[RMDB]
RNA sequence: GGGAACGACUCGAGUAGAGUCGAAAAAAGAAAGUGGAGUAUGAUCCAUCCGGCAAUGAGAUGUUUGAUAUUGGAUCCGAUGUCGAUGACAUCGAGCUGGAUGCGUCUUUUAUUGUGGAUCCAAGCAAUCACUAUCCUAUUUCGAUAGGAUAGUGAUAAAAGAAACAACAACAACAAC
Reactivity to DMS in 0.01 (KOAc 150mM, MgCl2 10mM, bicine 150mM(pH8.5), 24C), signal-to-noise 9, nucleotides 027 to 126: a060a050g010a060a050a060g030u010g010g010a110g010u010a060u010g000a040u000c300c000a020u000c010c010g020g010c010a300a120u010g000a120g000a020u000g010u000u000u010g010a050u000a050u000u010g000g000a030u000c020c010g010a050u010g010u000c030g010a080u010g010a030c000a010u000c000g000a070g020c010u000g000g000a020u000g010c300g010u000c010u000u010u010u010a110u020u010g020u010g010g000a020u000c010c020a130a120g010c260a100
Reactivity to 2A3 in 0.01 (KOAc 150mM, MgCl2 10mM, bicine 150mM(pH8.5), 24C), signal-to-noise 9, nucleotides 027 to 126: a000a000g160a040a030a010g080u130g070g060a090g070u190a090u200g020a010u010c010c000a000u000c010c000g010g000c030a110a300u160g010a080g000a070u020g020u040u090u150g050a030u050a060u090u180g020g000a020u000c020c010g030a030u040g020u050c030g050a070u200g040a020c000a000u000c010g010a010g000c010u010g010g000a010u010g010c020g010u000c010u060u210u060u070a250u110u210g110u100g020g000a000u000c010c000a010a010g060c040a040